Notes:
Chemical mapping of a 207-nucleotide RNA with DMS and 2A3. The 2A3 profile rests on 968 reads. For DMS, 1,964 sequencing reads were counted. Values are in units of 0.01, from 0 to 300, in steps of 10. For 2A3 the reverse transcriptase was SuperScript II with manganese.
[RMDB]
RNA sequence: GGGAACGACUCGAGUAGAGUCGAAAAAUUCAGCGUGUCGGAUAACUUCCAAGAAAUCUUUCGGUUGAUUUCAUAUCUUGGAUUGAUGUACACUGUUGAUGAGGACUUAACAGUGACUGUCACUGGACCCACAUCGCUAGUAAAGAAGACACGGAAACACGUUCUGAGAAUUCGUUCUCAGAACGUGAAAAGAAACAACAACAACAAC
Reactivity to DMS in 0.01 (KOAc 150mM, MgCl2 10mM, bicine 150mM(pH8.5), 24C), signal-to-noise 1, nucleotides 027 to 156: a100u020u010c030a150g070c030g020u000g020u010c000g010g030a210u000a060a100c060u000u010c010c000a010a030g010a000a010a040u010c000u010u000u000c010g060g050u010u010g020a190u000u000u000c000a140u010a090u000c000u000u000g030g020a050u000u000g010a170u000g040u000a120c100a010c050u000g020u000u020g000a010u010g010a100g040g000a140c070u000u000a010a050c010a070g020u000g030a180c120u010g000u000c050a040c020u000g040g020a290c110c020c020a120c050a050u000c010g060c030u000a100g020u010a080a130a160g010a100a070g020a010c000a030c020g000g000a060a080a280
Reactivity to 2A3 in 0.01 (KOAc 150mM, MgCl2 10mM, bicine 150mM(pH8.5), 24C), signal-to-noise 2, nucleotides 027 to 156: a020u120u090c040a050g060c020g010u000g030u000c030g000g030a010u020a200a130c000u010u000c000c000a000a000g000a030a040a020u010c000u000u110u050c200g190g010u000u050g080a300u060u000u020c020a020u030a040u030c000u000u030g000g010a050u030u140g050a040u130g020u060a020c110a040c070u000g050u100u140g020a020u020g000a050g000g060a060c120u160u070a140a010c080a010g020u010g160a200c140u110g130u280c010a020c000u040g030g010a030c000c020c000a020c010a010u030c030g020c020u050a030g070u140a020a060a100g050a040a000g000a010c020a010c010g010g020a050a040a010